Background: Structure probing data (2A3 and DMS) for a 170-nucleotide construct. Values cover nucleotides 27 to 129.
[RMDB]
RNA sequence: GGGAACGACUCGAGUAGAGUCGAAAAGAUUCCCCUGCGACGGGUAGGCUCAUCCUGAGACCGGGGAGCUUCGAAGAUCUCUCUAUUCUCCAGAAAGGAGGAAGGAGCUCUCGAACGCCCCCCCGACUGAGGAGCAACUUCGGUUGCUCCAAAAGAAACAACAACAACAAC
Reactivity to 2A3 in 0.01 (KOAc 150mM, MgCl2 10mM, bicine 150mM(pH8.5), 24C), signal-to-noise 4, nucleotides 027 to 129: g060a090u060u040c000c000c000c000u050g040c030g090a060c010g010g000g010u040a030g050g000c000u000c040a140u050c020c050u060g090a050g070a130c070c020g000g000g000g000a030g000c000u000u000c000g030a090a030g010a020u010c000u000c000u000c010u040a280u070u000c000u010c000c000a070g230a230a170a060g050g000a010g000g000a030a010g000g000a000g010c000u000c000u000c000g010a020a020c090g000c000c000c000c000c000c000c080g000a040c030u030g070a040
Reactivity to DMS in 0.01 (KOAc 150mM, MgCl2 10mM, bicine 150mM(pH8.5), 24C), signal-to-noise 5, nucleotides 027 to 129: g020a240u050u060c010c000c030c110u080g020c010g010a100c080g010g030g040u040a050g000g060c010u010c090a100u020c040c000u040g040a060g010a110c120c080g020g000g010g050a300g020c010u010u000c020g020a040a060g050a010u010c040u020c000u020c050u060a130u020u010c010u040c000c010a240g060a150a150a130g010g010a010g070g030a020a130g020g020a030g010c190u020c020u000c040g000a030a010c170g000c000c010c040c010c010c000c030g010a090c060u030g020a160
Record summary:
For DMS the reverse transcriptase was MarathonRT. For 2A3, 7,258 sequencing reads were counted.